[RMDB]
RNA sequence: GGGAACGACUCGAGUAGAGUCGAAAAAAAAAAAGAUAUGGACGCAGGGAGCAACGUGGGACUAUAACGUCGGAAACGACGUUACGAAUCCCAUAGUUGCGAAGAACUGCGUCCUAAGUCAAAAAAAUCGAUAAUAUAUCUUCGGAUAUAUUAUCGAAAAAGAAACAACAACAACAAC
Reactivity to DMS in 0.01 (KOAc 150mM, MgCl2 10mM, bicine 150mM(pH8.5), 24C), signal-to-noise 1, nucleotides 027 to 126: a010a030a090a100a050a120a080g000a050u000a300u000g010g000a020c000g000c000a030g000g000g000a150g000c000a010a000c000g000u000g000g000g020a050c150u000a150u000a000a000c000g040u000c020g000g010a260a090a130c030g000a000c000g020u000u000a000c050g000a120a100u000c000c000c000a000u010a060g010u000u000g000c020g040a030a080g020a090a170c000u000g000c000g000u000c000c000u000a020a050g000u010c000a020a000a030a070a080a170a040